An RNA of 177 nucleotides, treated with 2A3 and DMS and read out base by base. For DMS the reverse transcriptase was MarathonRT. Source: RMDB library OK2TST, as collected in RNAgym.
RNA sequence: GGGAACGACUCGAGUAGAGUCGAAAAUAGUGCUGCUUUUUGGGAAAUUGAACUUGCGCAAGUAACGGAAUAUUGAUGAAUUUUCAGCAUUUCUUGUGUCAAAAUUUCUGGGGCAAGUAAAAAACCAGUAAAUUUACGAUUUCGAUCGUAAAUUUACAAAAGAAACAACAACAACAAC
Reactivity to 2A3 in 0.01 (KOAc 150mM, MgCl2 10mM, bicine 150mM(pH8.5), 24C), signal-to-noise 1, nucleotides 027 to 126: u090a000g040u020g010c010u000g010c020u070u060u050u280u240g150g000g030a040a080a050u010u090g040a100a030c020u010u040g000c040g000c040a050a000g040u010a040a000c040g020g030a100a040u050a020u130u140g170a130u050g050a070a220u050u050u000u090c030a040g000c000a040u030u050u030c020u010u050g000u000g090u070c040a040a020a010a230u030u050u060c050u010g000g030g020g000c090a080a010g050u110a000a040a020a050a000a000c010c020a000
Reactivity to DMS in 0.01 (KOAc 150mM, MgCl2 10mM, bicine 150mM(pH8.5), 24C), signal-to-noise 2, nucleotides 027 to 126: u020a110g020u000g000c030u000g000c080u000u000u000u000u010g010g000g000a040a020a090u010u000g000a120a130c180u000u000g000c020g000c040a030a080g010u000a060a130c060g000g000a020a020u000a080u010u000g000a120u020g010a110a060u000u000u000u000c020a080g040c040a060u000u000u000c030u000u000g000u000g010u030c020a030a060a070a080u000u010u000c030u000g000g000g000g000c010a000a060g010u010a010a040a060a080a070a080c050c030a120

The 2A3 profile rests on 1,126 reads. In probing experiments dimethyl sulfate is read out at A N1 and C N3, which are open when not base-paired. 2A3 adducts were read by reverse transcription with SuperScript II with manganese.